[RMDB]
RNA sequence: GGGAACGACUCGAGUAGAGUCGAAAAGAGACGUUGUUCGCAACGUCUCGCAAUAUGCGGCGCUCGCGCGCCGCAGUGAGAUCGUCGGGAUCCAGACCGACAACACCCAAGAAUUCGUUCUUGGGAACAUAAUGUAGUCGUUCGCGACUACAUUAUGAAAAGAAACAACAACAACAAC
Reactivity to DMS in 0.01 (KOAc 150mM, MgCl2 10mM, bicine 150mM(pH8.5), 24C), signal-to-noise 2, nucleotides 027 to 126: g000a000g010a000c000g010u000u000g010u010u010c250g030c000a010a010c000g020u000c010u000c000g010c140a090a090u010a040u000g000c000g010g040c010g110c030u010c250g030c300g010c000g070c000c000g110c010a000g000u000g020a180g020a060u000c150g000u010c010g000g000g000a030u020c010c040a100g000a080c020c010g010a030c000a080a100c230a140c000c000c000a000a030g000a020a030u000u000c210g020u000u000c000u000u010g000g000g000a030a090
Reactivity to 2A3 in 0.01 (KOAc 150mM, MgCl2 10mM, bicine 150mM(pH8.5), 24C), signal-to-noise 3, nucleotides 027 to 126: g010a000g000a000c000g000u010u030g020u030u100c240g030c120a000a000c000g000u000c000u000c000g000c000a060a080u170a100u150g020c000g030g000c050g000c100u280c300g130c070g000c020g000c000c000g000c000a000g000u080g050a130g010a080u130c100g010u000c000g010g000g030a030u060c060c000a020g060a080c000c010g040a010c010a020a020c040a050c000c000c000a000a010g020a000a020u140u130c190g030u080u000c050u000u000g010g000g010a010a000
The record gives the reactivity of an RNA of 177 nucleotides to DMS and 2A3. Reactivities are given for positions 27 through 126. 2A3 adducts were read by reverse transcription with SuperScript II with manganese. Conditions: 150 mM KOAc, 10 mM MgCl2 and 150 mM bicine (pH 8.5), 24 C. Source: RMDB library M2PK50, as collected in RNAgym. For DMS, 1,765 sequencing reads were counted.